Annotation
Chemical mapping of a 177-nucleotide RNA with 2A3 and DMS. For DMS the reverse transcriptase was MarathonRT. Values cover nucleotides 27 to 126. The RNA was probed in 150 mM KOAc, 10 mM MgCl2 and 150 mM bicine (pH 8.5) at 24 C.

[RMDB]
RNA sequence: GGGAACGACUCGAGUAGAGUCGAAAAGAUAUGGAUUAGAACUACGCAAACUGGAGCGAUGAAAUCGGAAACGAUGGAGCUCCACUAUGCGCUAAUCCUAAGUCAAACUAUCUGUUCGCAGAUAGAAGUACCUUGAUGAGUUCGCUCAUCAAGGUACAAAAGAAACAACAACAACAAC
Reactivity to 2A3 in 0.01 (KOAc 150mM, MgCl2 10mM, bicine 150mM(pH8.5), 24C), signal-to-noise 2, nucleotides 027 to 126: g000a010u080a060u140g000g000a010u000u030a050g030a190a080c090u140a030c300g070c000a010a020a040c040u020g010g020a000g030c000g220a300u100g030a070a030a010u010c000g010g000a050a060a050c000g010a000u010g020g010a000g000c000u040c000c000a000c000u000a000u000g010c010g020c010u000a000a000u000c000c000u030a150a010g040u030c040a000a050a050c000u010a000u000c000u000g120u100u100c300g010c110a010g000a000u000a000g010a040a040
Reactivity to DMS in 0.01 (KOAc 150mM, MgCl2 10mM, bicine 150mM(pH8.5), 24C), signal-to-noise 1, nucleotides 027 to 126: g000a030u000a300u000g000g000a000u000u000a010g010a090a060c080u010a300c030g010c000a010a030a120c300u000g020g010a000g000c000g000a030u000g000a070a090a000u010c000g000g000a090a100a180c000g000a000u000g000g000a040g020c010u000c000c000a000c030u000a170u000g000c010g000c010u000a000a010u000c000c000u010a020a100g000u000c020a100a110a190c000u000a010u010c000u020g000u000u010c180g010c010a010g000a000u000a000g000a070a210